The record gives the reactivity of an RNA of 207 nucleotides to DMS and 2A3. The RNA was probed in 150 mM KOAc, 10 mM MgCl2 and 150 mM bicine (pH 8.5) at 24 C.
RNA sequence: GGGAACGACUCGAGUAGAGUCGAAAACGCCCCGAGCUGACGGUGUUCAUCGACAUCAAGAGCAGCUACAUCGUGGGCUGGUGGUUGUCGGAAAGCGAAAGCACGGUCUCCACCAUGUUUGCGCUGAGCCAUGCCAUGCGGACCUUCGACCACGUGCUCAGGGCAUUACUUUCGAGUAAUGCCCUGAAAAAGAAACAACAACAACAAC
Reactivity to DMS in 0.01 (KOAc 150mM, MgCl2 10mM, bicine 150mM(pH8.5), 24C), signal-to-noise 1, nucleotides 027 to 156: c040g000c170c010c030c030g030a000g000c000u010g010a030c000g020g020u010g000u000u000c150a180u000c080g010a090c010a030u000c040a110a110g000a110g000c010a040g000c000u000a060c060a110u000c070g000u010g040g030g030c020u020g040g030u000g030g010u000u000g060u000c120g030g000a030a300a300g010c020g000a000a070a000g010c000a060c000g000g000u000c050u000c090c030a080c020c040a110u000g000u000u000u000g030c100g000c070u010g000a300g040c000c000a070u000g050c020c020a260u000g020c010g000g000a300c020c040u000u000c000g020a050c000c030a000c000g010u000g030c000
Reactivity to 2A3 in 0.01 (KOAc 150mM, MgCl2 10mM, bicine 150mM(pH8.5), 24C), signal-to-noise 3, nucleotides 027 to 156: c070g030c000c020c000c030g040a000g000c000u020g010a050c030g040g020u000g030u100u080c130a270u130c280g040a010c000a030u030c040a170a160g040a060g100c000a000g000c000u070a070c020a180u080c060g030u220g000g000g000c040u010g130g000u000g000g000u020u010g020u010c000g000g000a020a030a000g000c010g070a110a040a000g020c010a000c030g020g030u040c020u020c020c010a040c020c020a030u200g150u070u200u100g070c110g000c030u030g010a000g000c010c000a010u010g010c000c020a100u240g000c020g010g000a030c010c010u000u000c010g030a000c000c000a010c000g020u120g000c000